[RMDB]
RNA sequence: GGGAACGACUCGAGUAGAGUCGAAAAACAUGCUACAAUGGCCAGUACAGAGGGCAGCGAGACCGUGAGAUAGAGCGAAUCCCUUAAAGCUGGUCUCAGUUCGGAUCGCCGUAUGCAACUCGACGGCAGUUUAUUAGAAAUUCGUUUCUAAUAAACUAAAAGAAACAACAACAACAAC
Reactivity to 2A3 in 0.01 (KOAc 150mM, MgCl2 10mM, bicine 150mM(pH8.5), 24C), signal-to-noise 8, nucleotides 027 to 126: a000c040a030u090g020c030u070a050c040a050a090u110g020g000c000c000a020g010u040a030c030a090g030a020g010g010g010c020a010g020c010g020a060g040a090c030c030g030u090g010a080g010a040u130a020g150a010g020c010g020a020a080u070c010c000c000u010u090a090a060a000g000c010u010g010g000u000c000u000c000a010g030u060u110c030g020g030a060u040c030g010c020c010g020u040a040u130g060c020a050a070c020u020c060g020a000c000g000g000c000
Reactivity to DMS in 0.01 (KOAc 150mM, MgCl2 10mM, bicine 150mM(pH8.5), 24C), signal-to-noise 9, nucleotides 027 to 126: a100c070a060u020g010c060u010a050c100a040a040u020g010g010c010c010a060g010u010a040c090a190g000a050g000g000g000c150a230g000c010g010a110g010a080c030c010g010u010g000a050g010a060u010a040g010a300g000c010g000a140a100u030c010c010c010u000u020a040a080a250g000c010u000g000g000u000c010u000c060a070g000u010u020c040g000g000a250u010c050g000c010c080g000u010a060u020g000c070a060a080c060u000c030g000a030c030g000g010c040
Source: RMDB library OK1LIB, as collected in RNAgym. Structure probing data (2A3 and DMS) for a 177-nucleotide construct. The reactions ran in a buffer of 150 mM KOAc, 10 mM MgCl2 and 150 mM bicine (pH 8.5), at 24 C. Reactivities are rounded to 0.1 and cut off at 0 and 3. For 2A3, 18,026 sequencing reads were counted. For DMS the reverse transcriptase was MarathonRT.